[RMDB]
RNA sequence: GGGAACGACUCGAGUAGAGUCGAAAAGAAGUUUACAAUUCUCAAUGGCGUGCGUCACGAACGGAACCGCUUUUGCACGGAAGAAGAAGAUGACAUGGAAGGAAUGCUGCAAUAAGUGGGGAAGAGCGACAGGUUAGGACUUCGGUCCUAACCUGUCAAAAGAAACAACAACAACAAC
Reactivity to DMS in 0.01 (KOAc 150mM, MgCl2 10mM, bicine 150mM(pH8.5), 24C), signal-to-noise 1, nucleotides 027 to 126: g030a090a080g010u000u000u000a070c140a070a080u000u000c000u000c030a090a040u010g010g000c090g010u000g000c150g000u000c010a070c100g010a020a040c080g000g000a300a110c040c040g000c000u010u000u010u010g000c010a120c100g000g030a100a070g040a110a050g040a120a090g000a120u010g000a100c140a000u000g000g010a120a040g030g030a080a010u020g000c120u000g000c070a030a000u010a040a010g090u000g020g000g000g020a130a020g010a030g030c110
Reactivity to 2A3 in 0.01 (KOAc 150mM, MgCl2 10mM, bicine 150mM(pH8.5), 24C), signal-to-noise 1, nucleotides 027 to 126: g050a070a020g060u030u200u110a140c100a110a080u080u050c070u000c000a110a170u130g090g030c070g030u040g050c020g040u100c050a060c110g100a160a000c000g080g090a050a000c010c010g000c040u040u040u070u030g070c030a000c010g030g080a100a000g020a140a000g070a030a020g050a090u100g040a100c060a090u070g000g080a070a000g020g000a040a040u120g050c070u010g000c080a000a110u100a250a000g020u020g020g000g000g000a000a050g020a010g000c080
This 177-nucleotide RNA was probed chemically with DMS and 2A3. Source: RMDB library OK2TRN, as collected in RNAgym. Reactivities are given for positions 27 through 126. The DMS profile rests on 654 reads.